[RMDB]
RNA sequence: GGGAACGACUCGAGUAGAGUCGAAAAUUAAUACUGCUACAUUUUUAAGACCCUUAGUUAUUUAGCUUUACCGCCCAGGAUGGGGUGCAGCGUUCCUGCAAUAUUCAGGGCACCUAGGUGCAGCCUUCAUGCCUCAUGCCGUUCGCGGCAUGAGGAAGACACUUUAACUGUUCGCAGUUAAAGUGUCAAAAGAAACAACAACAACAAC
Reactivity to 2A3 in 0.01 (KOAc 150mM, MgCl2 10mM, bicine 150mM(pH8.5), 24C), signal-to-noise 2, nucleotides 027 to 156: u130u050a070a120u060a150c020u030g040c030u040a030c090a090u070u130u000u000u180a090a070g070a160c010c010c010u070u030a010g070u070u060a160u100u070u180a040g020c000u030u010u210a130c080c050g000c030c010c010a080g050g040a120u110g010g010g030g030u040g020c040a010g000c010g050u060u020c000c040u000g090c000a030a070u020a060u190u130c050a040g010g040g000c020a020c010c010u050a040g160g000u050g040c000a020g040c030c000u020u080c070a050u110g030c010c000u000c000a000u000g010c030c010g090u030u020c170g040c040g000g010c000a000u000g000a000g000g000a000a000
An RNA of 207 nucleotides, treated with 2A3 and read out base by base.